Chemical mapping of a 177-nucleotide RNA with 2A3 and DMS.
The RNA was probed in 150 mM KOAc, 10 mM MgCl2 and 150 mM bicine (pH 8.5) at 24 C.
Values cover nucleotides 27 to 126.
It was measured as part of the RMDB library OK2TRN.
2A3 adducts were read by reverse transcription with SuperScript II with manganese.
For 2A3, 3,527 sequencing reads were counted.
The DMS profile rests on 3,734 reads.

RNA sequence: GGGAACGACUCGAGUAGAGUCGAAAACGUGCUUGUCGAGUACGGACUCAUCGAAAAGGUCGACGACGCUGGUUACUAUCGAAUCACUGCGGAAGGUGAAGCUUACCUCGAGGGAGAUCUCGACGCGAACCAUGCUUUACUUCGGUAAAGCAUGGUUAAAAGAAACAACAACAACAAC
Reactivity to 2A3 in 0.01 (KOAc 150mM, MgCl2 10mM, bicine 150mM(pH8.5), 24C), signal-to-noise 3, nucleotides 027 to 126: c020g010u060g050c020u140u170g060u090c030g010a000g020u040a040c030g040g120a050c010u020c040a200u030c070g060a110a070a000a090g060g050u050c020g020a040c010g020a030c030g000c030u030g080g000u060u050a120c080u080a070u160c050g080a080a020u030c020a040c100u080g010c040g000g080a070a030g070g000u050g070a070a020g030c010u040u040a050c000c020u010c020g000a040g000g020g010a050g010a040u020c010u010c040g010a020c000g000c010g080
Reactivity to DMS in 0.01 (KOAc 150mM, MgCl2 10mM, bicine 150mM(pH8.5), 24C), signal-to-noise 4, nucleotides 027 to 126: c070g020u010g020c060u000u010g030u000c070g000a070g000u000a090c070g020g000a150c030u000c020a080u010c050g000a070a080a080a070g000g000u000c020g020a100c030g010a220c050g000c060u000g010g000u010u000a110c140u000a100u010c120g000a060a040u000c020a030c110u000g010c060g000g000a090a100g000g000u000g000a040a130g000c040u000u000a080c180c030u000c020g000a140g000g000g000a090g000a100u000c020u000c000g000a050c080g010c110g000